[RMDB]
An RNA of 177 nucleotides, treated with DMS and read out base by base.

RNA sequence: GGGAACGACUCGAGUAGAGUCGAAAACUGCGCUGCUUGCCGGGGUGGCUCUGGUGCCUAAGGCCAAGAGCCAUGUGACGGUAGUUGCGGUGCUCGGGGUACUCGGCGUAUUUCUGAUGGUCUCGGCCUCCGUGAGACCAUUCGUGGUCUCACGGAGAAAAGAAACAACAACAACAAC
Reactivity to DMS in 0.01 (KOAc 150mM, MgCl2 10mM, bicine 150mM(pH8.5), 24C), signal-to-noise 2, nucleotides 027 to 126: c050u000g020c040g030c000u000g010c030u000u030g060c010c000g010g030g010g030u000g000g010c010u000c000u000g010g040u000g020c020c040u020a120a130g020g050c000c030a230a050g000a020g020c000c010a010u000g010u010g000a110c020g010g010u010a010g000u000u010g050c010g020g030u000g000c050u000c040g010g000g010g000u000a070c070u010c050g000g000c060g000u000a050u000u000u000c040u000g010a150u020g010g000u010c040u000c040g010g000c110
Description: The data come from the RNA Mapping Database (RMDB), library OK2TRN. DMS (dimethyl sulfate) methylates the pairing face of unpaired adenines and cytosines.